[RMDB]
RNA sequence: GGGAACGACUCGAGUAGAGUCGAAAAGGCACCGGCGCGCUGCCCGGCCCGGCGGGCAUCGAGACCGAGCUGUCGGUGCUGGUGCAGAUCCGUGACAUUCUCGCGGGCAAGGGUGGCCCGGCGAGCAUCACGAAAUCAGGUUCGCCUGAUUUCGUGAAAAAGAAACAACAACAACAAC
Reactivity to DMS in 0.01 (KOAc 150mM, MgCl2 10mM, bicine 150mM(pH8.5), 24C), signal-to-noise 2, nucleotides 027 to 126: g000g010c020a030c020c000g020g000c080g010c080g000c110u000g020c000c000c000g000g000c020c040c010g020g030c010g000g030g010c010a030u000c020g010a270g010a100c060c050g010a050g020c110u020g020u000c000g000g020u000g010c010u000g030g010u000g000c020a070g010a080u000c050c030g030u010g000a160c180a190u010u020c000u000c010g030c020g000g000g020c010a120a130g000g000g020u000g000g010c000c010c000g030g030c020g000a050g020c300a070
Reactivity to 2A3 in 0.01 (KOAc 150mM, MgCl2 10mM, bicine 150mM(pH8.5), 24C), signal-to-noise 1, nucleotides 027 to 126: g100g000c010a010c000c040g010g000c020g000c010g030c040u000g010c000c000c000g010g050c010c000c010g090g040c020g010g000g110c000a020u020c100g080a090g130a090c040c010g020a030g080c100u100g170u060c010g000g040u080g000c060u030g010g040u120g000c020a020g000a120u050c020c010g050u100g040a040c050a100u110u030c040u000c020g000c010g000g030g020c010a060a120g100g150g060u140g060g000c010c000c000g080g060c010g010a010g030c000a050
This 177-nucleotide RNA was probed chemically with DMS and 2A3. The RNA was probed in 150 mM KOAc, 10 mM MgCl2 and 150 mM bicine (pH 8.5) at 24 C. For DMS the reverse transcriptase was MarathonRT. Reactivities are given for positions 27 through 126. It was measured as part of the RMDB library OK2TRN.